[RMDB]
RNA sequence: GGGAACGACUCGAGUAGAGUCGAAAAAUCAAUGUUGUUACUUUUACACUUUAUUUUCUAUGCUUUUCCUCUACAACUCUCUUUUAUUUUGGAGAAAUGAAGUGGAUUUCUACUCUUUGAUUGGAGAGGAAGUAUUAACGUUCGCGUUAAUACUUCCAAAAGAAACAACAACAACAAC
Reactivity to 2A3 in 0.01 (KOAc 150mM, MgCl2 10mM, bicine 150mM(pH8.5), 24C), signal-to-noise 4, nucleotides 027 to 126: a000u100c060a040a090u070g010u010u020g000u010u070a160c010u040u040u070u130a040c000a010c000u000u030u020a020u020u050u040u010c060u070a160u130g120c030u090u020u000u060c000c000u070c030u040a070c040a160a140c010u010c000u020c000u050u130u160u090a130u130u240u110u140g090g010a050g020a010a020a020u030g000a010a010g000u020g000g030a000u050u050u000c030u050a100c000u010c010u050u150u120g130a160u090u110g040g030a060g010a030
Annotation: Structure probing data (2A3) for a 177-nucleotide construct. For 2A3 the reverse transcriptase was SuperScript II with manganese. The RNA was probed in 150 mM KOAc, 10 mM MgCl2 and 150 mM bicine (pH 8.5) at 24 C.